[RMDB]
RNA sequence: GGGAACGACUCGAGUAGAGUCGAAAACAUCACUAAUCAUUAGGGAAAUGCAAAUCAAGACCACAAGGAGAUACUACCUCAUACUCAUUAGGAUGACUAUUAUCAAAAAUUCGAAAAUAACAAGUGUUGAUGAGCCUAUGGAGAAAUUGGAACACUGAAUCCCUAUGAGAUUCGUCUCAUAGGGAUUAAAAGAAACAACAACAACAAC
Reactivity to 2A3 in 0.01 (KOAc 150mM, MgCl2 10mM, bicine 150mM(pH8.5), 24C), signal-to-noise 3, nucleotides 027 to 156: c030a040u140c030a020c060u110a080a030u070c060a070u080u060a030g010g020g010a020a140a000u060g040c030a050a040a040u090c040a080a050g030a030c030c010a040c050a130a010g020g010a020g010a000u020a030c020u010a020c030c000u040c010a030u050a090c030u030c050a020u000u100a010g060g010a020u050g020a020c020u050a060u240u100a090u100c050a130a030a040a010a020u070u080c040g090a020a110a020a120u170a060a060c080a130a020g120u030g020u090u030g040a060u030g020a040g000c020c000u030a050u060g000g030a060g040a020a100a050u140u150g070g010a000a040c030a000c180u260g010
Reactivity to DMS in 0.01 (KOAc 150mM, MgCl2 10mM, bicine 150mM(pH8.5), 24C), signal-to-noise 3, nucleotides 027 to 156: c050a100u000c030a070c060u010a080a120u010c060a110u000u010a080g010g030g000a050a090a060u000g020c070a050a090a130u010c040a060a060g000a130c060c050a060c040a090a090g010g010a120g030a160u000a060c040u010a100c030c010u000c040a080u010a040c020u000c050a080u000u000a030g020g020a040u000g020a090c040u000a050u000u000a070u000c040a040a070a070a100a180u010u010c080g000a090a080a040a110u000a040a080c010a070a090g020u010g010u000u000g000a090u000g000a040g010c060c090u000a070u000g020g010a110g010a040a100a060u000u000g000g000a060a070c050a080c090u000g000